The record gives the reactivity of an RNA of 177 nucleotides to 2A3 and DMS. The data come from the RNA Mapping Database (RMDB), library TTRDEL. 2A3 adducts were read by reverse transcription with SuperScript II with manganese.
[RMDB]
RNA sequence: GGGAACGACUCGAGUAGAGUCGAAAAGAUAUGGAUUGAGCAACAGCAAUUGGUCGGAAACGACCACGGUUGACAUGCUCCGUCCUAAGUCAAAACUUGUCGGACUGCUUCGGCAGUCCGACAAGAAGAAGUAAAGAAACUUCGGUUUCUUUACUUCAAAAGAAACAACAACAACAAC
Reactivity to 2A3 in 0.01 (KOAc 150mM, MgCl2 10mM, bicine 150mM(pH8.5), 24C), signal-to-noise 1, nucleotides 027 to 126: g030a010u100a010u110g000g000a010u010u020g010a000g040c010a000a280c060a160g050c020a030a280u180u100g010g030u020c000g030g030a100a060a030c010g010a020c000c020a010c010g000g030u020u050g010a110c030a120u050g010c000u000c010c000g020u020c000c000u030a080a000g000u000c040a000a050a140a160c000u010u020g040u050c030g020g050a050c010u040g110c050u180u140c300g080g000c000a010g040u010c020c000g020a030c020a010a000g020a000a000
Reactivity to DMS in 0.01 (KOAc 150mM, MgCl2 10mM, bicine 150mM(pH8.5), 24C), signal-to-noise 2, nucleotides 027 to 126: g000a020u000a300u010g010g000a030u000u000g000a000g020c000a060a090c130a050g010c020a060a110u010u030g010g050u000c000g020g000a100a110a140c040g020a010c000c000a000c300g000g030u000u000g010a210c200a070u000g000c000u000c020c020g020u000c010c030u000a030a180g000u000c050a080a040a120a130c000u000u000g000u000c000g030g000a020c010u030g000c010u000u030c280g000g000c050a000g060u000c070c010g000a000c000a000a000g000a040a120